[RMDB]
RNA sequence: GGGAACGACUCGAGUAGAGUCGAAAAGCCGAAGCGGAACAAGCUGUACUUGCGGCCACUCAACAAAAGGAAACCCUAGAUCGACGUGUUGAAUCAGUAGCAGGUUUUCAACGUGACCGCGAUCGGGCUAUACGGCGAUUUUCGAAUCGCCGUAUAGAAAAGAAACAACAACAACAAC
Reactivity to DMS in 0.01 (KOAc 150mM, MgCl2 10mM, bicine 150mM(pH8.5), 24C), signal-to-noise 4, nucleotides 027 to 126: g000c010c000g030a060a210g030c020g000g000a160a110c090a060a080g010c010u000g000u010a100c040u010u010g020c010g000g000c030c110a070c040u000c060a070a040c150a040a030a060a170g010g010a070a070a080c070c040c040u000a080g010a080u010c050g000a100c120g010u010g010u000u000g010a040a040u010c100a100g000u000a100g030c050a090g000g010u000u000u010u010c040a020a050c030g000u000g000a110c080c010g010c010g000a080u010c020g010g000g000
Reactivity to 2A3 in 0.01 (KOAc 150mM, MgCl2 10mM, bicine 150mM(pH8.5), 24C), signal-to-noise 2, nucleotides 027 to 126: g020c000c000g000a010a000g050c040g030g060a070a120c020a110a040g040c050u050g050u070a080c040u030u050g040c000g020g000c000c010a040c020u050c010a020a120c030a050a110a020a020g100g000a050a130a050c000c040c000u060a090g000a090u050c030g090a080c050g050u060g040u110u020g040a040a030u040c020a050g070u100a020g030c040a080g060g000u080u040u010u070c000a020a000c020g020u040g020a060c040c030g020c010g050a060u030c030g000g000g000
The record gives the reactivity of an RNA of 177 nucleotides to DMS and 2A3. Values are in units of 0.01, from 0 to 300, in steps of 10. Source: RMDB library OK2TST, as collected in RNAgym. High DMS reactivity at an A or C suggests that its Watson-Crick edge is free. Reactivities are given for positions 27 through 126.